[RMDB]
RNA sequence: GGGAACGACUCGAGUAGAGUCGAAAAGCGUAAGACGUAUUGAUUUUUCAGACAGUUAGCGGGCUGCGGGUUGCAGUCCUUACCGGUAGAUAGGAUCUUCUCUGGAGAGUAAUGCCCAGGCUGCUUCAUUAGUGGUCAUAUUCGUAUGACCACUAAUAAAAGAAACAACAACAACAAC
Reactivity to DMS in 0.01 (KOAc 150mM, MgCl2 10mM, bicine 150mM(pH8.5), 24C), signal-to-noise 9, nucleotides 027 to 126: g020c050g010u010a080a080g010a300c080g010u010a050u020u000g010a070u000u010u010u010u000c030a070g010a070c120a070g000u010u010a070g030c130g000g000g000c020u000g000c030g020g010g010u030u010g010c020a040g000u000c010c010u000u010a030c060c050g010g010u020a040g010a060u010a050g000g010a300u010c030u010u000c040u000c020u000g010g000a110g010a070g000u010a040a060u020g000c010c020c030a100g000g010c040u000g010c050u010u010c110
Reactivity to 2A3 in 0.01 (KOAc 150mM, MgCl2 10mM, bicine 150mM(pH8.5), 24C), signal-to-noise 9, nucleotides 027 to 126: g030c010g040u070a070a020g100a080c030g020u060a100u060u110g090a070u040u040u030u090u090c040a050g020a090c020a020g040u060u100a050g060c070g020g010g000c010u020g000c050g050g150g050u120u250g000c010a000g010u010c010c000u000u030a030c010c010g050g020u030a030g030a110u080a060g070g040a050u010c010u060u020c030u020c010u040g030g020a040g000a000g040u080a070a050u080g020c000c000c000a020g050g010c010u040g000c010u040u040c050